[RMDB]
RNA sequence: GGGAACGACUCGAGUAGAGUCGAAAACAGGUGCAGAGGCCAGGCUUCUUCAUGGAACCCACUGUGUUCACAGGCGUGGAAGAUCACAUGUACCUUGCCAAGGAGGAAUCCUUUGGGCCUAUCAUGGAUCAUCGAGUUGAUUCGUCAACUCGAUGAUAAAAGAAACAACAACAACAAC
Reactivity to 2A3 in 0.01 (KOAc 150mM, MgCl2 10mM, bicine 150mM(pH8.5), 24C), signal-to-noise 1, nucleotides 027 to 126: c020a010g000g060u060g050c060a020g030a060g090g040c020c030a030g000g060c000u060u020c000u070u030c050a060u080g060g030a050a060c000c020c030a050c090u100g010u040g040u200u120c070a070c040a110g110g010c130g120u070g000g050a090a040g070a140u100c020a010c010a150u050g020u070a040c000c000u000u090g040c010c010a010a010g020g000a010g030g090a080a090u030c000c000u040u060u110g070g010g010c030c010u120a150u140c040a060u110g120g030
Reactivity to DMS in 0.01 (KOAc 150mM, MgCl2 10mM, bicine 150mM(pH8.5), 24C), signal-to-noise 3, nucleotides 027 to 126: c110a040g010g010u000g000c060a070g000a090g010g010c040c060a140g000g000c050u000u000c010u010u000c040a060u010g010g000a070a130c040c010c090a130c080u000g000u000g010u000u020c080a070c090a090g010g020c110g030u000g010g010a090a060g020a030u000c060a090c070a040u010g000u010a070c040c050u000u000g010c010c010a040a040g020g000a040g000g030a110a100u000c010c010u000u000u000g030g000g000c040c050u010a060u010c090a080u000g010g010